The data come from the RNA Mapping Database (RMDB), library OK3TST.
Chemical mapping of a 207-nucleotide RNA with DMS and 2A3.
2A3 adducts were read by reverse transcription with SuperScript II with manganese.
Values cover nucleotides 27 to 156.
For 2A3, 870 sequencing reads were counted.
[RMDB]
RNA sequence: GGGAACGACUCGAGUAGAGUCGAAAAGCAAAUGGAUUAAAGCGACAGAAAGGGGAGUGAAAGCCCCAGCGGAGGGCUUAGGCUCUACUUGCAGAUCCAAGACGCAUAUUCUGUCCCCCUCCCAGUCGGUGAAAGCUCUUCACCCCUUUCACCUCCAGAUUUAUACCCAGUUCGCUGGGUAUAAAUCAAAAGAAACAACAACAACAAC
Reactivity to DMS in 0.01 (KOAc 150mM, MgCl2 10mM, bicine 150mM(pH8.5), 24C), signal-to-noise 2, nucleotides 027 to 156: g050c050a060a130a110u030g000g000a100u010u000a100a120a120g030c070g030a110c050a070g000a040a060a050g000g020g020g000a100g020u000g020a270a060a100g020c040c000c020c020a230g020c140g010g000a080g000g000g010c010u000u010a040g020g010c000u000c000u000a030c000u020u010g030c040a140g010a060u000c090c060a040a100g020a240c090g000c050a080u000a090u000u000c020u000g000u010c000c000c030c020c000u000c000c010c020a190g020u000c100g000g020u010g010a030a030a080g010c080u000c070u000u020c120a170c020c020c090c000u000u000u000c010a040c020c010u010c060c050a300
Reactivity to 2A3 in 0.01 (KOAc 150mM, MgCl2 10mM, bicine 150mM(pH8.5), 24C), signal-to-noise 1, nucleotides 027 to 156: g010c000a010a070a120u060g020g000a020u090u230a190a130a060g030c070g050a070c050a060g020a070a080a030g030g010g020g010a020g010u060g050a150a060a040g000c000c050c080c030a010g020c080g080g060a140g080g020g060c020u050u030a060g130g030c000u010c020u030a110c010u050u150g010c020a000g010a050u020c020c010a020a010g100a050c120g040c060a020u050a140u300u110c120u130g110u060c010c010c010c000c000u000c000c000c000a010g080u070c020g000g000u000g010a000a010a000g000c020u050c050u290u150c030a090c000c010c000c010u000u000u000c010a010c010c000u050c050c000a010